[RMDB]
RNA sequence: GGGAACGACUCGAGUAGAGUCGAAAAGCGCAAAUCCACAAACGCCAACGAUGAGCGUUUCGCUGUAGCCGCUUAAGGCAACAGCCGGGGCCGCCUGAGCCCUGUUACCAUAGACGGCUGGCGGGGGUAAUUACUUAUUGCUUCGGCAAUAAGUAAAUACUUUAGGUCGUUUCGACGACCUAAAGUAAAAAGAAACAACAACAACAAC
Reactivity to 2A3 in 0.01 (KOAc 150mM, MgCl2 10mM, bicine 150mM(pH8.5), 24C), signal-to-noise 2, nucleotides 027 to 156: g030c040g030c080a030a050a060u080c060c020a070c100a100a110a000c050g010c010c020a100a050c160g140a120u150g010a020g050c000g010u020u080u130c060g010c000u000g010u040a030g000c000c010g110c250u260u180a110a050g000g000c020a030a010c010a020g030c000c000g040g010g010g000c030c010g020c040c080u070g030a020g010c000c000c000u000g030u060u050a030c000c000a010u020a040g050a030c000g010g010c060u050g000g020c000g020g000g000g030g010u040a110a080u040u000a000c000u000u000a000u000u000g000c000u000u030c120g090g000c000a000a000u010a000a000g000u000a000a000a000
Reactivity to DMS in 0.01 (KOAc 150mM, MgCl2 10mM, bicine 150mM(pH8.5), 24C), signal-to-noise 1, nucleotides 027 to 156: g000c010g000c030a010a110a120u010c040c050a100c050a050a220a050c020g030c000c030a060a230c130g010a120u000g000a160g030c030g030u000u000u010c000g010c040u000g010u010a080g000c000c000g030c120u000u010a060a180g020g050c000a000a070c020a030g000c050c070g000g000g010g010c050c070g010c100c090u040g000a210g040c000c000c020u000g010u000u000a040c000c020a130u000a060g030a080c150g020g010c030u000g020g000c030g000g050g030g010g030u010a060a140u000u010a000c000u020u020a000u000u000g030c000u000u010c300g050g030c000a030a020u000a000a040g050u000a010a020a240
Structure probing data (2A3 and DMS) for a 207-nucleotide construct.
For DMS the reverse transcriptase was MarathonRT.
The reactions ran in a buffer of 150 mM KOAc, 10 mM MgCl2 and 150 mM bicine (pH 8.5), at 24 C.